[RMDB]
RNA sequence: GGGAACGACUCGAGUAGAGUCGAAAAGGGACGCCUUUAGAAGAGGAGGCUAGGUGGUAUUCCGGUGUGGGAUACUUGGUAAUAUGUAACGCUAAUUGCAUAAGAUUGUAGGACGGAAUUUACAGUCAAAACGGUCCUGCGUUCGCGCAGGACCGAACGAACCACAAAAGUUCGCUUUUGUGGUUCGAAAAGAAACAACAACAACAAC
Reactivity to 2A3 in 0.01 (KOAc 150mM, MgCl2 10mM, bicine 150mM(pH8.5), 24C), signal-to-noise 2, nucleotides 027 to 156: g010g000g000a030c040g030c000c020u080u070u040a130g020a180a010g030a040g000g010a000g010g000c010u060a020g030g030u010g010g040u050a070u040u030c030c020g090g070u130g030u080g080g020g000a000u010a060c000u020u120g050g000u070a070a040u040a070u150g050u050a020a030c030g010c170u080a100a040u180u090g000c020a020u040a080a070g000a050u080u040g000u000a050g020g100a050c070g060g020a000a020u110u130u040a090c030a050g050u020c030a000a020a120a060c000g050g000u000c000c010u030g020c000g040u020u070c190g000c000g000c080a000g000g000a000c000c000g000a000a000